[RMDB]
RNA sequence: GGGAACGACUCGAGUAGAGUCGAAAAGCAAGAGCAGAUGAAGGAAGGCUCUCACUAGGGAACUUGAAGCCCCCACCACUUCAUUCUCCCUUCAAGGCCACUGAGGACAAAGGCACUGAACAGAGUGUCUAACUGGGCAUUUCGAUGCCCAGUUAGAAAAAGAAACAACAACAACAAC
Reactivity to DMS in 0.01 (KOAc 150mM, MgCl2 10mM, bicine 150mM(pH8.5), 24C), signal-to-noise 1, nucleotides 027 to 126: g020c110a010a070g000a070g060c010a130g010a100u020g010a080a040g010g030a120a070g010g000c040u010c040u010c090a080c170u000a090g030g000g020a000a090c060u010u000g000a020a110g020c020c050c040c030c020a040c160c110a150c000u010u000c010a100u010u000c060u000c020c000c040u000u000c160a040a100g000g010c020c030a100c110u020g000a080g000g000a070c090a090a090a080g010g010c040a000c010u000g040a070a020c210a120g000a040g010u000g010
Structure probing data (DMS) for a 177-nucleotide construct. For DMS, 730 sequencing reads were counted. Values cover nucleotides 27 to 126. DMS (dimethyl sulfate) methylates the pairing face of unpaired adenines and cytosines.